[RMDB]
RNA sequence: GGGAACGACUCGAGUAGAGUCGAAAAGUUAGGCGAGGCUCCUAUACAAACACAGGUUGCUAAUCUGACGACGUCGAGAGACGCCCAAGAUUAGGACAGGAUAUAUCGAACCAAGGUAUAUCCCCAUAAAACUCGGAACACUUCGGUGUUCCGAGAAGUACAAGAGAAUGUUCGCAUUCUCUUGUACAAAAGAAACAACAACAACAAC
Reactivity to DMS in 0.01 (KOAc 150mM, MgCl2 10mM, bicine 150mM(pH8.5), 24C), signal-to-noise 3, nucleotides 027 to 156: g000u000u000a030g020g010c020g020a160g010g030c070u000c010c000u000a090u000a140c110a100a050a100c080a060c090a160g010g040u000u000g000c020u010a040a020u000c000u000g000a190c000g000a000c000g020u000c000g010a300g000a300g010a030c000g000c000c020c060a140a070g010a040u000u010a060g010g010a110c040a060g000g020a020u010a010u010a010u000c010g030a070a300c130c130a090a160g000g010u000a000u000a010u000c000c000c060c030a040u000a040a030a090a190c000u000c000g020g000a040a010c010a000c000u000u000c230g060g030u000g000u000u000c000c010g010a000g020a000a060
Reactivity to 2A3 in 0.01 (KOAc 150mM, MgCl2 10mM, bicine 150mM(pH8.5), 24C), signal-to-noise 3, nucleotides 027 to 156: g030u020u030a030g000g030c120g070a110g060g040c080u070c060c010u070a080u070a200c090a030a190a020c090a010c030a110g210g020u080u210g130c000u010a000a000u000c000u020g020a020c020g010a000c000g000u010c010g010a020g000a010g000a100c000g010c000c020c000a020a010g010a010u030u060a010g000g030a010c030a040g000g010a000u000a000u000a000u020c010g020a070a090c080c040a110a030g000g000u000a000u000a000u010c000c000c020c000a080u250a100a150a040a050c000u000c000g000g000a000a000c000a000c010u050u070c220g090g000u000g000u000u000c000c000g000a000g000a000a000